[RMDB]
RNA sequence: GGGAACGACUCGAGUAGAGUCGAAAAGAAGUGGCAGGGACAUGCCCCACAAGCUCGUUCUAGCAACAUAUGUUUGGCUAGUUCGAGCGAUUAGUCUUGAGGAGCGUCCUCUCGCCUCUUCACGAGAGGAGUAGCACGUCUUCGGACGUGCUACUCCAAAAGAAACAACAACAACAAC
Reactivity to 2A3 in 0.01 (KOAc 150mM, MgCl2 10mM, bicine 150mM(pH8.5), 24C), signal-to-noise 2, nucleotides 027 to 126: g000a020a020g030u040g000g000c010a000g100g020g000a000c060a050u300g040c040c000c000c000a000c000a050a000g000c010u000c000g000u000u000c000u000a000g000c040a040a000c090a100u300a080u110g280u200u110u080g120g110c000u000a000g060u000u010c000g000a000g000c000g000a000u000u090a040g000u020c030u060u130g070a130g000g060a200g020c030g000u000c000c010u240c000u010c110g000c010c000u000c000u010u000c010a010c100g120a100g020a060